[RMDB]
RNA sequence: GGGAACGACUCGAGUAGAGUCGAAAAGAAAGAAAGAAAGAUCUCUGUAAAGUGAGGGAUUGCCUGGACCAGGUCGGCGGGCCUGCUCCAGUUUCCUUCGCUCUGCUCAACGGGCAGACCGCCACAAAAAACGCGUGGCUGUUCGCAGCCACGCGAAUCUUAUGUCUAAGUUCGCUUAGACAUAAGAAAAAGAAACAACAACAACAAC
Reactivity to 2A3 in 0.01 (KOAc 150mM, MgCl2 10mM, bicine 150mM(pH8.5), 24C), signal-to-noise 1, nucleotides 027 to 156: g040a010a100a000g050a050a120a010g050a030a100a020g090a110u020c050u030c040u100g070u210a160a060a000g050u070g030a010g000g000g060a060u050u200g090c010c010u000g000g000a000c000c000a000g000g000u050c100g010g040c040g020g000g000c010c000u000g000c000u010c000c000a000g010u000u050u000c010c000u050u020c030g020c000u040c000u010g000c010u010c050a110a100c110g050g030g000c000a020g020a130c000c000g000c020c010a080c100a010a170a010a020a030a020c010g000c000g000u010g000g000c010u000g010u030u070c170g000c090a020g020c010c000a000c000g010c000g000a000a000
This 207-nucleotide RNA was probed chemically with 2A3.
The RNA was probed in 150 mM KOAc, 10 mM MgCl2 and 150 mM bicine (pH 8.5) at 24 C.
Source: RMDB library M2RFPK, as collected in RNAgym.